An RNA of 207 nucleotides, treated with 2A3 and read out base by base. It was measured as part of the RMDB library PDB130. 2A3 adducts were read by reverse transcription with SuperScript II with manganese. Conditions: 150 mM KOAc, 10 mM MgCl2 and 150 mM bicine (pH 8.5), 24 C.
RNA sequence: GGGAACGACUCGAGUAGAGUCGAAAAAGGGUUCGAUUCCGGAGAAGGAGCCUGAGAAACGGCUACUACAACUACGGUUCGGCAGCAGGGAAGAAAAUUGGCCAAUCCUAAUUCAGGGAGCCAGUGACAAGAAAUAGCAAGCUGGGAAACUUACGUUCAUUCCCUAAAACUUCGGUUUUAGGGAAUGAAAAGAAACAACAACAACAAC
Reactivity to 2A3 in 0.01 (KOAc 150mM, MgCl2 10mM, bicine 150mM(pH8.5), 24C), signal-to-noise 2, nucleotides 027 to 156: a030g020g000g000u080u090c040g010a060u160u110c000c020g000g000a030g010a010a120g030g050a010g010c010c060u100g050a050g000a110a140a020c120g040g000c020u150a160c000u050a010c040a170a010c010u040a020c030g000g010u000u030c010g030g000c010a020g030c020a070g020g020g000a040a040g020a010a170a030a020u060u050g010g010c010c050a040a020u070c030c000u120a170a110u250u140c040a020g000g050g000a060g010c020c000a040g040u080g010a000c040a040a000g050a050a090a000u090a000g000c000a000a050g020c010u030g010g000g010a110a030a040c030u110u100a030c070g050u000u000